Structure probing data (2A3 and DMS) for a 177-nucleotide construct. Source: RMDB library OK2TST, as collected in RNAgym. 2A3 adducts were read by reverse transcription with SuperScript II with manganese.
RNA sequence: GGGAACGACUCGAGUAGAGUCGAAAAGUGGAGAGCCAGCGGUUAACAGUCACGCCUUCGGCGUUUUGCGCAAUGUAGUUAGCAUCGCGGUCUUCUUUCAUCAGUUUGGCGAUGCGAUCAAACGCCAUCGAUACUCACCUUUCGAGGUGAGUAUCGAAAAAGAAACAACAACAACAAC
Reactivity to 2A3 in 0.01 (KOAc 150mM, MgCl2 10mM, bicine 150mM(pH8.5), 24C), signal-to-noise 2, nucleotides 027 to 126: g100u090g040g040a070g000a010g080c000c050a020g020c020g030g020u060u070a080a020c010a030g070u060c030a040c070g030c000c020u090u130c120g000g010c060g000u030u010u080u110g020c020g000c020a050a080u110g000u090a040g040u040u120a040g000c010a030u070c000g020c030g050g120u040c050u040u000c000u060u130u040c070a140u060c020a030g080u050u140u140g090g000c000g030a040u040g040c020g020a020u110c040a040a040a040c040g020c010c000a010
Reactivity to DMS in 0.01 (KOAc 150mM, MgCl2 10mM, bicine 150mM(pH8.5), 24C), signal-to-noise 3, nucleotides 027 to 126: g030u010g010g010a050g000a110g020c040c020a080g050c060g010g030u010u010a060a070c080a100g000u000c100a140c070g010c020c090u010u000c150g010g020c010g010u000u010u000u010g010c070g000c140a070a060u020g010u020a090g020u000u010a100g000c000a010u000c000g020c000g020g020u000c050u000u010c060u000u020u000c160a060u020c140a070g000u000u010u000g030g020c010g000a040u010g020c050g010a060u010c080a030a060a030c030g010c010c030a130